This 177-nucleotide RNA was probed chemically with DMS and 2A3. For DMS the reverse transcriptase was MarathonRT. The 2A3 profile rests on 17,362 reads. The RNA was probed in 150 mM KOAc, 10 mM MgCl2 and 150 mM bicine (pH 8.5) at 24 C.

[RMDB]
RNA sequence: GGGAACGACUCGAGUAGAGUCGAAAAAUAGGAGGACAGAUCCACCUAGCCAUCAUGGCAGUGUUCAAGAUGUCACCAGGAUACGUGCUGGGUGUGUUUUUAAGGAAACUCACUUCAAGAGAGACAGUAGUGUUUGUAAAUUCGUUUACAAACACUAAAAAGAAACAACAACAACAAC
Reactivity to DMS in 0.01 (KOAc 150mM, MgCl2 10mM, bicine 150mM(pH8.5), 24C), signal-to-noise 9, nucleotides 027 to 126: a100u010a080g010g020a070g010g010a100c120a090g000a100u010c090c020a050c020c010u000a050g010c020c010a070u010c090a090u010g000g010c050a080g010u010g010u010u010c140a090a090g010a090u000g010u000c050a110c050c020a070g000g000a050u010a070c180g010u000g020c030u000g000g000g010u000g010u000g010u000u000u000u000u010a070a140g010g000a050a040a060c020u000c030a080c040u000u010c090a060a090g000a090g010a110g000a080c110a080g010
Reactivity to 2A3 in 0.01 (KOAc 150mM, MgCl2 10mM, bicine 150mM(pH8.5), 24C), signal-to-noise 8, nucleotides 027 to 126: a000u140a040g020g020a010g010g030a010c020a050g080a060u020c010c010a010c000c010u010a020g010c010c000a040u080c030a060u100g040g000c050a050g070u040g050u160u120c070a070a040g060a170u090g040u060c010a020c050c020a020g080g020a030u070a130c080g030u140g040c010u020g000g000g000u020g000u010g010u010u020u010u050u100a100a060g120g010a020a030a020c010u020c010a050c010u090u080c080a100a010g060a010g010a000g030a080c020a040g090